Source: RMDB library OK2TRN, as collected in RNAgym. This 177-nucleotide RNA was probed chemically with 2A3 and DMS. The DMS profile rests on 1,844 reads. 2A3 adducts were read by reverse transcription with SuperScript II with manganese. The RNA was probed in 150 mM KOAc, 10 mM MgCl2 and 150 mM bicine (pH 8.5) at 24 C. DMS adducts were read by reverse transcription with MarathonRT.
[RMDB]
RNA sequence: GGGAACGACUCGAGUAGAGUCGAAAAGAUCGGCCUGUCGCUUGCGGUAUUCGGAAUCUUGCACGCCCUCGCUCAAGCCUUCGUCACUCCAAACGUUUCGGCGAGAAGCAGGCCAUUAUCGCCGGCAAUGCAAAGACCAUUUCGAUGGUCUUUGCAUAAAAGAAACAACAACAACAAC
Reactivity to 2A3 in 0.01 (KOAc 150mM, MgCl2 10mM, bicine 150mM(pH8.5), 24C), signal-to-noise 1, nucleotides 027 to 126: g040a090u110c070g020g000c010c030u040g060u110c040g010c050u000u080g030c010g040g000u100a120u020u150c010g040g040a090a100u030c040u030u070g050c090a040c060g050c010c010c020u020c020g000c000u070c000a030a040g010c000c030u040u060c030g040u050c020a030c110u040c000c070a100a100a070c090g030u040u060u090c010g050g000c010g000a000g010a060a000g000c000a040g000g000c010c000a010u070u110a040u000c010g000c000c000g000g000c070a070
Reactivity to DMS in 0.01 (KOAc 150mM, MgCl2 10mM, bicine 150mM(pH8.5), 24C), signal-to-noise 3, nucleotides 027 to 126: g000a060u000c130g020g020c020c010u000g000u000c160g010c050u000u000g000c010g000g010u000a130u000u000c120g010g010a080a110u000c060u020u000g000c090a090c060g020c110c060c040u000c080g020c040u000c100a100a140g000c020c030u000u020c060g010u010c050a070c080u000c060c060a110a080a100c180g000u000u000u000c040g000g010c000g000a040g020a120a110g000c030a020g000g010c010c020a070u000u010a060u000c040g000c000c000g010g000c200a080